[RMDB]
RNA sequence: GGGAACGACUCGAGUAGAGUCGAAAAGAUAUGGACCUACCCGCUUUGUAUGACGAAUUCGGAAACGAACUAUCAUACAACGAGCGGUAGGUCCUAAGUCAAAGAAGGCCAGUUCGCUGGCCUUCAAGAGGAAUAUCAGCUUCGGCUGAUAUUCCUCAAAAGAAACAACAACAACAAC
Reactivity to DMS in 0.01 (KOAc 150mM, MgCl2 10mM, bicine 150mM(pH8.5), 24C), signal-to-noise 1, nucleotides 027 to 126: g010a010u000a300u000g000g000a010c010c000u000a000c030c000c030g030c000u000u030u000g010u010a000u000g000a010c150g010a030a210u030u000c010g030g000a100a140a150c030g000a000a000c080u000a150u010c000a020u000a000c000a000a010c300g020a040g030c020g000g000u000a000g010g010u010c000c000u000a010a030g000u010c090a130a040a180g000a040a040g010g030c010c000a010g010u000u010c220g000c000u000g000g030c000c010u000u000c000a040a040